[RMDB]
RNA sequence: GGGAACGACUCGAGUAGAGUCGAAAAAAGAAAAGGAAAAGUAUUUGUAGAUGAAUGAAGGUGAUUCCUUUGAAUAUUGAAAAUGAUUUUAUUUUAGCCAUUGGUCUGACACUCAUUCCGAUGGGGUGACAUGUGUCCCUGCCUUAGUCAUCAGAGAAUCCCCUGAUUAUUUCGAUAAUCAGGGGAUAAAAGAAACAACAACAACAAC
Reactivity to 2A3 in 0.01 (KOAc 150mM, MgCl2 10mM, bicine 150mM(pH8.5), 24C), signal-to-noise 2, nucleotides 027 to 156: a000a000g070a010a050a000a000g050g010a010a020a000a010g010u050a120u140u150u080g020u040a030g030a070u120g050a070a090u080g000a080a000g070g000u030g050a100u130u130c000c010u040u000u050g010a040a010u180a090u090u100g030a030a060a050a090u050g000a050u000u080u060u060a050u080u100u050u140a070g030c000c000a010u010u010g030g000u000c010u010g040a010c030a010c100u110c000a010u050u000c020c000g030a030u010g000g000g000g000u020g020a020c020a080u070g050u040g020u080c000c040c000u000g020c000c000u000u050a000g000u000c000a000u050c030a030g090a020g220a170
Reactivity to DMS in 0.01 (KOAc 150mM, MgCl2 10mM, bicine 150mM(pH8.5), 24C), signal-to-noise 2, nucleotides 027 to 156: a120a100g000a040a010a040a060g010g000a030a020a060a150g000u010a050u000u000u020g000u000a100g010a120u000g020a110a080u010g020a090a070g020g020u000g010a110u000u000c000c020u000u000u010g000a060a080u000a090u010u010g000a080a050a040a110u010g000a100u000u000u000u000a020u030u020u000u000a100g000c060c020a160u010u000g020g000u000c080u010g040a060c060a030c060u010c030a050u000u000c010c010g020a170u000g020g010g030g040u000g000a070c090a050u010g000u000g010u000c000c020c010u000g020c020c020u000u000a120g030u010c040a070u010c030a100g000a230g000a100
Structure probing data (2A3 and DMS) for a 207-nucleotide construct. It was measured as part of the RMDB library OK3TST. The reactions ran in a buffer of 150 mM KOAc, 10 mM MgCl2 and 150 mM bicine (pH 8.5), at 24 C. Values cover nucleotides 27 to 156. For 2A3 the reverse transcriptase was SuperScript II with manganese.